An RNA of 177 nucleotides, treated with 2A3 and DMS and read out base by base. 2A3 adducts were read by reverse transcription with SuperScript II with manganese. The 2A3 profile rests on 1,390 reads. The data come from the RNA Mapping Database (RMDB), library TTRDES. The RNA was probed in 150 mM KOAc, 10 mM MgCl2 and 150 mM bicine (pH 8.5) at 24 C. For DMS the reverse transcriptase was MarathonRT.
RNA sequence: GGGAACGACUCGAGUAGAGUCGAAAAGAUAUGGAUCCACGUUCUUUUGACGCACCUACUUCGGAAACGAAGUAGUGCGAUAAGAACGUGUGGAUCCUAAGUCAAAAGACACGGUUCGCCGUGUCAACAUUUCGCUGUCCUUCGGGACAGCGAAAUGAAAAGAAACAACAACAACAAC
Reactivity to 2A3 in 0.01 (KOAc 150mM, MgCl2 10mM, bicine 150mM(pH8.5), 24C), signal-to-noise 1, nucleotides 027 to 126: g050a030u070a040u140g000g000a000u000c000c000a030c010g010u000u020c030u190u220u130u300g220a180c000g000c000a040c040c170u020a020c030u020u010c000g020g000a100a100a090c020g000a020a000g000u000a000g020u010g000c000g050a030u110a030a000g000a010a020c040g040u040g080u050g050g020a000u000c000c020u010a080a000g050u000c060a030a000a000a290g000a000c000a000c000g060g100u090u170c300g020c200c010g020u010g030u010c000a000a000
Reactivity to DMS in 0.01 (KOAc 150mM, MgCl2 10mM, bicine 150mM(pH8.5), 24C), signal-to-noise 1, nucleotides 027 to 126: g000a080u010a300u000g010g000a000u000c000c000a070c000g000u000u000c000u020u000u000u010g000a240c150g000c000a020c220c100u000a000c000u000u000c000g050g000a110a140a220c020g000a030a010g000u000a020g020u050g020c000g000a140u000a010a000g010a000a020c000g010u000g040u000g060g000a000u010c000c010u000a020a070g020u020c010a070a080a110a210g000a020c000a020c000g040g020u000u010c260g000c000c020g040u000g060u000c000a040a210